RNA sequence: GGGAACGACUCGAGUAGAGUCGAAAAAAAAGAUAUGGAGGAUCGAAGGCUUGGAUUUACCCAGAAAUACAUGUCGGAAACGACAUGUACACUGGGUUGUCAGCCUUGGAUCCUCCUAAGUCAAAAACGUUAGUCUAGUGUUCGCACUAGACUAACGAAAAGAAACAACAACAACAAC
Reactivity to DMS in 0.01 (KOAc 150mM, MgCl2 10mM, bicine 150mM(pH8.5), 24C), signal-to-noise 2, nucleotides 027 to 126: a050a070a030a080g000a100u010a300u000g000g020a010g030g010a020u010c010g040a010a000g010g020c010u000u030g030g000a000u010u000u000a030c000c000c000a010g010a050a090a300u000a010c000a000u000g030u000c000g000g000a100a070a180c010g010a020c000a010u000g020u000a010c180a220c010u020g010g000g010u000u000g000u000c010a020g030c000c000u000u000g000g000a010u000c000c000u000c030c000u010a020a020g000u000c010a050a050a040a020a170
Source information:
Chemical mapping of a 177-nucleotide RNA with DMS. For DMS the reverse transcriptase was MarathonRT. The reactions ran in a buffer of 150 mM KOAc, 10 mM MgCl2 and 150 mM bicine (pH 8.5), at 24 C. It was measured as part of the RMDB library TTRDES.